[RMDB]
RNA sequence: GGGAACGACUCGAGUAGAGUCGAAAACACUCAACCCAAGGCGGGCCUGAGGAGGACUCCAAGAAGGCGAGCAGCGGCACACAUGUGGCACCGGUUACCUCCUUUGCGAGAACCGAUGUUAGUAAACACUCCACUAGCUCUUCGGAGCUAGUGGAGUAAAAGAAACAACAACAACAAC
Reactivity to DMS in 0.01 (KOAc 150mM, MgCl2 10mM, bicine 150mM(pH8.5), 24C), signal-to-noise 2, nucleotides 027 to 126: c210a230c040u030c070a070a150c000c080c000a070a140g000g000c000g010g000g060c050c000u000g020a190g020g000a100g000g000a060c030u030c000c150a100a270g000a180a050g010g020c000g000a140g000c020a150g000c110g000g020c090a000c000a080c180a030u000g030u000g040g010c020a040c000c040g010g000u030u000a060c160c000u000c000c000u000u080u000g000c060g040a000g020a040a100c010c000g000a040u010g000u000u050a150g020u020a140a040a080c050
Reactivity to 2A3 in 0.01 (KOAc 150mM, MgCl2 10mM, bicine 150mM(pH8.5), 24C), signal-to-noise 2, nucleotides 027 to 126: c030a020c040u110c040a170a160c020c000c040a010a010g170g000c020g020g000g000c000c020u030g000a010g040g010a000g040g090a060c040u000c030c000a020a100g190a020a040g030g000c010g000a020g020c040a000g050c020g010g020c000a000c010a000c000a160u090g090u100g040g000c010a000c000c000g000g000u040u100a160c000c000u060c060c000u150u250u260g050c300g000a000g000a000a000c000c010g020a040u020g000u000u050a040g000u100a040a170a100c050